This 207-nucleotide RNA was probed chemically with 2A3 and DMS. For 2A3 the reverse transcriptase was SuperScript II with manganese. The RNA was probed in 150 mM KOAc, 10 mM MgCl2 and 150 mM bicine (pH 8.5) at 24 C. In probing experiments dimethyl sulfate is read out at A N1 and C N3, which are open when not base-paired. For 2A3, 1,697 sequencing reads were counted.
RNA sequence: GGGAACGACUCGAGUAGAGUCGAAAAUUUUCUUGUUCCCCCGUGAAUCUUAAAGCUCAAUCUACUGUCGGUAGCAUCUUAGCAGAUGAGGAGGCCUCUCGUCUUAGCAGCGCAAAGUAUGGUGUAGCUGAUAGGCCUUGCAACGUUUUCCGUGUAAGUAAUAAUCGGUGUUCGCACCGAUUAUUACAAAAGAAACAACAACAACAAC
Reactivity to 2A3 in 0.01 (KOAc 150mM, MgCl2 10mM, bicine 150mM(pH8.5), 24C), signal-to-noise 3, nucleotides 027 to 156: u040u030u010u020c020u020u160g010u020u040c010c000c000c010c010g070u030g100a030a060u030c030u030u120a150a050a010g020c010u010c040a040a120u040c060u050a060c010u050g080u150c080g050g000u020a020g010c020a030u020c020u060u110a040g010c060a020g030a090u000g010a020g070g040a000g010g010c060c000u010c010u010c010g160u000c030u040u110a010g000c050a020g020c030g010c070a120a080a080g060u110a150u160g010g020u060g020u080a010g030c010u020g010a030u020a020g010g000c010c000u020u060g060c050a060a050c040g040u010u000u080u020c040c010g030u040g040u100a110a060
Reactivity to DMS in 0.01 (KOAc 150mM, MgCl2 10mM, bicine 150mM(pH8.5), 24C), signal-to-noise 2, nucleotides 027 to 156: u000u000u000u000c050u000u010g010u000u000c000c040c000c050c050g060u010g010a070a070u000c050u000u000a060a110a140g000c030u000c000a120a090u000c030u010a050c020u000g020u000c030g000g040u030a120g000c030a120u000c040u000u010a120g020c070a030g000a060u010g010a070g030g010a090g010g000c030c030u000c060u000c040g010u020c050u020u000a070g050c030a110g010c050g030c040a060a070a210g010u010a090u000g050g000u000g010u000a080g000c050u000g000a050u000a050g010g000c030c010u000u000g000c000a080a090c110g010u000u010u000u000c030c010g000u000g010u000a060a170